[RMDB]
RNA sequence: GGGAACGACUCGAGUAGAGUCGAAAAGAUAUGGACACCAUUCCUUCGACGAAGUCGGAAACGACAGAGAAGAAAUGUGUGUCCUAAGUCAAAGAUUUUAGUUCCUCUUCGGAGGAACUAAAAUCAACUAAUUUAUGAGGUUCGCCUCAUAAAUUAGAAAAGAAACAACAACAACAAC
Reactivity to DMS in 0.01 (KOAc 150mM, MgCl2 10mM, bicine 150mM(pH8.5), 24C), signal-to-noise 5, nucleotides 027 to 126: g000a030u000a300u000g010g000a000c000a010c010c000a010u000u000c020c010u000u000c000g010a200c270g000a080a100g010u000c010g000g010a080a080a190c010g000a020c000a010g000a140g010a010a000g000a010a010a000u000g010u010g040u000g010u010c000c000u000a000a070g000u000c020a090a110a130g000a010u000u000u000u000a000g000u000u000c000c000u000c010u010u010c190g010g000a010g010g000a010a000c000u010a000a000a000a000u000c000a060a180
Reactivity to 2A3 in 0.01 (KOAc 150mM, MgCl2 10mM, bicine 150mM(pH8.5), 24C), signal-to-noise 3, nucleotides 027 to 126: g040a010u090a040u170g000g010a000c000a000c010c000a010u010u000c010c020u020u020c030g300a300c040g050a280a040g010u000c010g010g060a100a070a070c020g000a000c010a010g040a010g000a020a000g040a000a010a000u050g260u020g000u000g000u020c010c000u000a020a000g060u020c030a110a080a140g000a000u010u000u000u030a000g000u000u000c010c000u000c010u040u050c250g140g000a000g000g010a000a000c000u000a000a000a020a000u000c000a000a000
An RNA of 177 nucleotides, treated with DMS and 2A3 and read out base by base. Conditions: 150 mM KOAc, 10 mM MgCl2 and 150 mM bicine (pH 8.5), 24 C. For 2A3 the reverse transcriptase was SuperScript II with manganese.